Background
This 207-nucleotide RNA was probed chemically with 2A3. For 2A3 the reverse transcriptase was SuperScript II with manganese. The 2A3 profile rests on 703 reads. Values cover nucleotides 27 to 156.
RNA sequence: GGGAACGACUCGAGUAGAGUCGAAAAGCCGUGGCCAGCGCCGUGGCCACCUGACGACUCACGUUGAACAGCGAGGUCGCCUGCCCCAUGGCAGCGCCGCUCAUCUGGGCGAACGCCGCCGUCUGCAGGGGAGUCAUCAGCAUCCCCAUCGACGCGCAGAUUGGACACUAUUCGUAGUGUCCAAUCUAAAAGAAACAACAACAACAAC
Reactivity to 2A3 in 0.01 (KOAc 150mM, MgCl2 10mM, bicine 150mM(pH8.5), 24C), signal-to-noise 1, nucleotides 027 to 156: g130c060c070g000u010g000g000c010c020a050g000c070g030c060c180g050u040g000g020c000c000a000c000c000u010g030a040c000g050a050c000u030c030a090c080g090u060u220g150a120a070c040a010g120c020g030a020g000g120u060c040g030c030c000u060g000c020c010c000c030a080u140g000g000c010a020g000c010g010c010c010g030c000u030c000a300u200c250u300g010g010g010c010g010a060a020c030g030c010c010g010c000c000g020u000c060u150g000c100a110g040g000g030g000a000g110u140c050a080u040c000a090g030c020a160u080c040c000c000c000a050u230c060g050a030c010g010c020g000c030